[RMDB]
RNA sequence: GGGAACGACUCGAGUAGAGUCGAAAAGCGCAUCGUGGAGUGGGUGCAGGAGCAGGGCAUCAACUUCUCCCUCCUCGACAACGCCGCCGUGCUGAUGCACCAGCUCUACGUGCAGAUGGGCCAAUGAAAACACGAUCGGUUUCGACCGAUCGUGUUUAAAAGAAACAACAACAACAAC
Reactivity to DMS in 0.01 (KOAc 150mM, MgCl2 10mM, bicine 150mM(pH8.5), 24C), signal-to-noise 1, nucleotides 027 to 126: g010c150g010c000a040u010c030g010u000g010g000a030g030u000g000g000g010u000g010c010a030g040g020a060g000c040a010g000g010g000c030a170u010c190a080a110c160u000u000c040u010c000c010c020u000c010c000u000c050g020a080c090a060a030c120g000c120c120g010c000c010g000u000g050c000u000g030a120u000g030c000a020c020c000a140g030c000u000c010u000a010c000g030u010g000c000a150g010a140u000g010g020g040c100c030a080a100u000g010a110